[RMDB]
RNA sequence: GGGAACGACUCGAGUAGAGUCGAAAACAAAGAUCAUCAUGAGCACAUCAAUGGCAGUGCUGGUAGUCAUGAUCUUGGGAGGAUUUUCAAUGAGUGACCUGGCCAAGCUUGUGAUCCUGAUGGGUGCCCACGAGGGGUGAUUCGUCACCCCUCGUGGAAAAGAAACAACAACAACAAC
Reactivity to DMS in 0.01 (KOAc 150mM, MgCl2 10mM, bicine 150mM(pH8.5), 24C), signal-to-noise 1, nucleotides 027 to 126: c080a010a010a130g000a020u040c020a000u000c030a020u000g000a020g010c030a010c030a070u090c220a200a120u030g000g010c080a080g000u020g000c050u000g000g010u000a060g040u030c090a010u020g020a120u000c060u000u040g000g000g000a120g000g000a090u000u020u020u000c000a090a090u040g010a130g000u010g050a100c040c060u000g000g000c020c060a060a070g060c130u000u000g020u000g040a000u000c000c050u000g000a020u030g030g040g000u000g040c000
Reactivity to 2A3 in 0.01 (KOAc 150mM, MgCl2 10mM, bicine 150mM(pH8.5), 24C), signal-to-noise 3, nucleotides 027 to 126: c080a020a090a060g080a100u060c000a000u000c000a000u080g040a000g050c000a010c000a010u140c080a030a300u230g150g010c050a040g050u070g090c020u040g050g020u080a090g000u000c010a030u010g020a080u020c000u000u030g070g030g000a070g150g020a090u000u050u070u130c060a110a120u180g020a010g060u030g040a060c000c050u050g110g000c000c000a040a010g020c030u110u110g020u050g010a010u030c000c000u060g000a050u020g010g060g050u060g010c000